[RMDB]
RNA sequence: GGGAACGACUCGAGUAGAGUCGAAAAUCUUUGCCUUAUACAUGCUCUGGAGGAGCAUAUUCAACCUCACAUCCGUGUUUGUGAACCUGUCCGGUGCUAUGGCCGAGUUUGGCUUCCUGGCGCUCGCCCCGAUGAUUAUGUUCGCAUAAUCAUCGGGAAAAGAAACAACAACAACAAC
Reactivity to 2A3 in 0.01 (KOAc 150mM, MgCl2 10mM, bicine 150mM(pH8.5), 24C), signal-to-noise 2, nucleotides 027 to 126: u000c050u130u050u150g020c010c010u140u100a120u020a150c060a020u050g000c020u040c010u080g220g080a140g050g040a010g110c040a000u060a040u070u130c030a000a040c030c000u040c020a030c000a120u070c070c040g060u030g060u080u110u050g060u020g030a050a020c030c010u080g090u080c000c010g050g010u070g010c050u100a100u140g030g070c010c000g060a100g010u030u070u080g090g010c000u020u010c020c000u000g040g050c070g000c040u050c020g060c000
Reactivity to DMS in 0.01 (KOAc 150mM, MgCl2 10mM, bicine 150mM(pH8.5), 24C), signal-to-noise 2, nucleotides 027 to 126: u000c050u010u000u000g020c050c030u000u000a130u000a110c160a030u020g020c010u000c010u010g010g000a140g030g010a080g000c060a030u000a020u000u000c110a060a060c050c060u030c060a070c090a060u000c110c070g010u010g000u000u010u000g010u000g000a050a090c050c040u000g000u000c050c050g010g010u000g000c040u000a050u000g000g000c040c070g000a090g010u000u000u010g020g010c040u010u000c030c040u000g000g010c080g000c040u010c090g010c180